[RMDB]
RNA sequence: GGGAACGACUCGAGUAGAGUCGAAAAUCUGGUUCGACAUUUAGAUGCUGUCAUGAUAAGGACUGUACAAGUAAUGGUCUGCUUGCAUCUGCACCACAUCUUGAACGGGUUACAGGAUUCAAUCAGAUAGAUGGACGCAUUUCGAUGCGUCCAUCUAAAAAGAAACAACAACAACAAC
Reactivity to DMS in 0.01 (KOAc 150mM, MgCl2 10mM, bicine 150mM(pH8.5), 24C), signal-to-noise 2, nucleotides 027 to 126: u000c010u000g000g020u000u010c160g020a090c110a040u000u010u000a080g020a080u000g000c000u020g010u000c100a080u010g000a050u010a090a230g000g000a150c010u000g010u000a040c100a040a120g010u000a100a110u000g000g030u000c050u000g000c060u000u000g000c120a030u010c010u010g010c110a050c090c030a090c170a040u000c070u000u020g000a140a080c090g010g000g000u030u000a060c130a040g030g010a070u000u000c030a030a030u010c040a030g000a110
Reactivity to 2A3 in 0.01 (KOAc 150mM, MgCl2 10mM, bicine 150mM(pH8.5), 24C), signal-to-noise 1, nucleotides 027 to 126: u010c010u010g000g030u000u080c090g070a020c080a130u080u060u030a090g000a050u050g000c020u030g020u010c060a090u130g110a100u050a030a100g000g000a020c010u030g010u090a040c020a080a050g030u030a140a100u110g090g030u030c020u030g050c020u060u080g000c010a060u020c010u020g000c070a020c000c000a020c000a030u040c020u020u040g010a090a000c050g110g020g110u030u020a050c050a020g080g040a050u180u030c000a020a020u000c020a000g010a040
Structure probing data (DMS and 2A3) for a 177-nucleotide construct. Values are in units of 0.01, from 0 to 300, in steps of 10. Conditions: 150 mM KOAc, 10 mM MgCl2 and 150 mM bicine (pH 8.5), 24 C. For DMS the reverse transcriptase was MarathonRT.